[RMDB]
RNA sequence: GGGAACGACUCGAGUAGAGUCGAAAAGGAUAGUAGUUCGCUACUAUCCAAAAGAUCUAUGAAAAUAGAUCAAAAAUGGUGGUGCUGACCAAAGAGCAAAAAAAACACAUAGCUUCGGCUAUGUGAACAUGUACACCUCGUUCGCGAGGUGUACAUGAAAAGAAACAACAACAACAAC
Reactivity to 2A3 in 0.01 (KOAc 150mM, MgCl2 10mM, bicine 150mM(pH8.5), 24C), signal-to-noise 1, nucleotides 027 to 126: g000g000a000u000a000g010u020a000g000u030u070c190g010c030u000a000c050u000a000u010c000c010a000a000a000a000g000a000u000c000u020a000u020g060a000a010a030a030u000a020g000a000u010c000a030a050a030a000a050u150g000g000u050g000g080u010g000c010u020g120a060c020c060a180a050a030g090a000g000c010a070a020a040a070a040a000a000a000c000a000c000a000u000a000g000c000u050u030c270g080g000c010u000a000u030g000u000g000a000a010
Reactivity to DMS in 0.01 (KOAc 150mM, MgCl2 10mM, bicine 150mM(pH8.5), 24C), signal-to-noise 1, nucleotides 027 to 126: g000g000a010u000a030g040u000a000g020u000u040c240g030c000u010a010c010u010a010u000c000c000a050a040a080a080g000a000u000c000u000a000u000g000a140a050a140a020u000a000g010a000u010c000a010a040a060a080a040u000g010g010u000g000g020u000g040c000u000g000a060c070c010a090a040a070g000a080g010c030a000a000a000a040a090a060a150a110c000a000c010a000u000a010g010c000u010u030c180g020g010c010u000a000u000g030u010g000a010a100
This 177-nucleotide RNA was probed chemically with 2A3 and DMS. Source: RMDB library M2PK50, as collected in RNAgym.